[RMDB]
The record gives the reactivity of an RNA of 177 nucleotides to 2A3 and DMS. It was measured as part of the RMDB library TTRINS. For DMS, 16,575 sequencing reads were counted. The RNA was probed in 150 mM KOAc, 10 mM MgCl2 and 150 mM bicine (pH 8.5) at 24 C.
RNA sequence: GGGAACGACUCGAGUAGAGUCGAAAAGAUAUGGAAUACAGACGUGGCGAGACAAUGAUGGUUACGCAUCUCGGAAACGAGAUGCGUAACUUGAGUCUCGAACUACCACGGCUGUAUUCCUAAGUCACAUCUAGAAUUACUUCGGUAAUUCUAGAUGAAAAGAAACAACAACAACAAC
Reactivity to 2A3 in 0.01 (KOAc 150mM, MgCl2 10mM, bicine 150mM(pH8.5), 24C), signal-to-noise 3, nucleotides 027 to 126: g000a000u020a000u070g010g000a010a020u010a000c000a010g020a000c000g010u010g000g010c000g000a020g030a010c060a100a110u300g300a160u300g300g000u000u010a000c000g000c010a010u000c020u000c000g000g000a010a020a000c010g000a000g000a000u000g000c010g000u000a000a000c000u000u000g000a000g000u000c000u000c000g000a010a000c020u110a040c010c000a000c000g000g010c000u000g000u000a000u000u010c000c000u000a000a010g000u000c000a000
Reactivity to DMS in 0.01 (KOAc 150mM, MgCl2 10mM, bicine 150mM(pH8.5), 24C), signal-to-noise 7, nucleotides 027 to 126: g010a010u000a060u010g000g000a020a000u000a000c000a010g000a010c000g030u000g000g000c010g010a020g000a010c010a080a070u010g010a050u010g010g000u000u000a010c000g010c000a000u000c000u000c000g010g000a010a010a040c000g010a010g010a000u000g010c000g020u000a000a000c000u000u000g010a300g000u000c000u000c000g000a030a010c050u010a300c020c010a000c000g010g000c000u000g000u000a000u000u000c000c000u000a000a030g000u000c010a300